[RMDB]
RNA sequence: GGGAACGACUCGAGUAGAGUCGAAAACCUAUCUGGUUUUUGUCACUACACUCACUAGUGAUUAUACGAUUACAGUCUUUGUUACUGUCAACCUUGCAAAAGUUUGCACUUAUGCCAUCUUUGCUUAACUAAGGUGACUGUUCGCAGUCACCUUAGUAAAAGAAACAACAACAACAAC
Reactivity to 2A3 in 0.01 (KOAc 150mM, MgCl2 10mM, bicine 150mM(pH8.5), 24C), signal-to-noise 2, nucleotides 027 to 126: c010c000u020a110u050c070u140g120g000u060u030u000u100u110g000u000c010a000c000u010a010c050a030c080u110c040a040c020u010a010g020u010g030a010u110u080a060u010a060c030g030a030u000u150a000c030a000g020u000c070u120u300u210g090u110u110a010c000u000g000u020c010a030a030c000c020u000u110g030c020a050a030a010a050g000u000u060u020g000c020a040c050u170u100a070u220g020c000c000a050u030c040u000u030u000g030c000u070u120a070
Reactivity to DMS in 0.01 (KOAc 150mM, MgCl2 10mM, bicine 150mM(pH8.5), 24C), signal-to-noise 2, nucleotides 027 to 126: c000c000u010a070u000c110u000g030g010u010u000u000u000u010g030u000c000a010c020u000a030c150a130c170u020c180a100c080u010a010g010u000g010a030u000u010a080u000a090c150g010a090u000u000a030c000a010g000u000c060u000u000u000g020u000u020a020c010u000g000u000c150a060a030c020c030u010u010g020c050a030a030a040a070g020u000u000u000g000c040a110c300u010u010a090u010g010c040c110a060u000c020u010u000u000g010c030u020u000a110